[RMDB]
RNA sequence: GGGAACGACUCGAGUAGAGUCGAAAACGCAUGUUCGCAUGCGAGGGCCCGUAGGUAUAAUUGUCAGGGUACUCGAUGAAAGGAUUUCGAAAGAGAUCCUGGAGAGUACGCCUUGGAUUUAUUAUACCUAAACGGUUUGAACGUGUUUCGACACGAAAGGUAAAACAAUGUUCGCAUUGUUUUACCUAAAAGAAACAACAACAACAAC
Reactivity to 2A3 in 0.01 (KOAc 150mM, MgCl2 10mM, bicine 150mM(pH8.5), 24C), signal-to-noise 2, nucleotides 027 to 156: c010g000c000a020u020g030u030u110c280g000c140a000u000g000c000g010a070g000g100g040c070c000c010g060u020a010g000g000u000a000u000a040a000u010u010g010u020c000a000g000g000g000u010a010c000u000c010g300a300u000g000a060a040a000g000g000a010u000u000u000c020g040a080a050a050g010a020g010a010u000c000c000u000g010g000a020g000a000g000u000a010c010g210c000c000u010u130g180g000a000u110u300u000a010u050u000a000u000a010c000c010u020a060a040a000c050g060g060u100u160u300g130a120a040c030g040u000g000u000u170u140c150g030a040c010a010c140g090a240a120
Reactivity to DMS in 0.01 (KOAc 150mM, MgCl2 10mM, bicine 150mM(pH8.5), 24C), signal-to-noise 2, nucleotides 027 to 156: c030g040c020a060u010g020u010u000c240g030c040a020u000g000c000g000a270g000g010g000c050c020c030g050u000a030g000g020u010a010u000a030a030u000u000g000u000c000a080g020g020g030u010a020c000u020c030g010a200u020g000a180a220a030g000g020a040u000u000u010c010g020a230a130a230g000a040g020a000u000c000c000u000g020g000a190g010a030g030u000a010c050g030c000c000u000u010g020g010a030u000u000u010a010u000u000a020u000a010c000c000u000a030a060a120c070g010g020u000u000u000g000a120a060c050g020u000g020u000u000u000c070g020a070c030a070c050g000a040a180